[RMDB]
RNA sequence: GGGAACGACUCGAGUAGAGUCGAAAAAUUACGGGCGGCGGAGGUGGAGCUGCGAUCCCUCCGCCCAUCGCGUGCUCUCUCGGUGGCCCAGACGCUGCAAACGGACAGGCGGGCCACCUGCAACGAAGAAGGUAAGUGAAUUCGUUCACUUACCUUCAAAAGAAACAACAACAACAAC
Reactivity to DMS in 0.01 (KOAc 150mM, MgCl2 10mM, bicine 150mM(pH8.5), 24C), signal-to-noise 5, nucleotides 027 to 126: a070u010u010a060c060g010g000g030c280g010g020c050g010g000a050g000g030u010g010g010a100g000c060u010g010c110g000a100u010c070c030c000u000c010c010g000c000c020c030a030u000c050g010c040g010u000g020c090u000c050u000c040u000c110g010g030u000g000g000c000c000c030a100g030a090c080g010c010u000g010c080a080a060a130c300g010g000a160c020a030g000g020c060g010g000g000c010c000a010c000c010u010g010c120a060a070c110g000a100a110
Reactivity to 2A3 in 0.01 (KOAc 150mM, MgCl2 10mM, bicine 150mM(pH8.5), 24C), signal-to-noise 3, nucleotides 027 to 126: a000u120u090a030c040g010g030g050c060g000g000c000g010g000a010g050g020u170g050g060a080g020c130u120g030c110g040a060u060c010c000c000u000c010c000g010c000c000c000a020u010c010g080c020g050u060g030c010u030c000u010c000u000c080g000g000u000g000g000c000c000c000a050g050a040c150g060c110u010g010c040a100a240a160c070g060g070a070c010a000g000g040c010g020g000g000c000c000a000c000c000u000g000c000a040a090c030g100a030a070
Structure probing data (DMS and 2A3) for a 177-nucleotide construct.
For DMS, 6,108 sequencing reads were counted.
The reactions ran in a buffer of 150 mM KOAc, 10 mM MgCl2 and 150 mM bicine (pH 8.5), at 24 C.